[RMDB]
RNA sequence: GGGAACGACUCGAGUAGAGUCGAAAACAGCGGCCACAACAUGAACCCUGUCUUCAUAUACAUGGUGCCGAAGCCCUGCCCCCGCGCGCGUAUCGUGCUCCCUGGUUUGUGCGCUCGGCCGGUACGCCGGUCAUUAAUGAUUCGUCAUUAAUGACCGAAAAGAAACAACAACAACAAC
Reactivity to DMS in 0.01 (KOAc 150mM, MgCl2 10mM, bicine 150mM(pH8.5), 24C), signal-to-noise 9, nucleotides 027 to 126: c090a110g020c070g010g010c020c040a060c080a070a090c110a090u010g010a090a080c050c040c050u000g000u010c070u000u000c090a050u000a100u000a090c090a060u010g010g010u000g010c050c040g010a100a120g000c020c010c020u000g000c020c010c010c010c040g010c130g010c110g000c020g010u010a020u000c020g010u010g010c020u000c040c020c010u000g010g010u000u010u010g010u000g010c050g010c030u000c080g000g000c010c010g010g010u000a020c030g020c040
Reactivity to 2A3 in 0.01 (KOAc 150mM, MgCl2 10mM, bicine 150mM(pH8.5), 24C), signal-to-noise 6, nucleotides 027 to 126: c020a010g040c040g020g000c040c030a030c030a110a050c030a080u080g060a050a060c020c030c050u050g070u060c040u110u070c050a060u130a010u030a200c060a070u110g050g010u060g080c060c030g030a050a030g040c000c010c010u040g040c000c000c010c010c010g020c010g000c010g000c000g020u020a020u050c010g030u080g030c010u040c010c000c000u020g060g050u060u120u120g080u040g020c030g000c030u020c020g010g020c020c020g000g010u010a000c010g010c010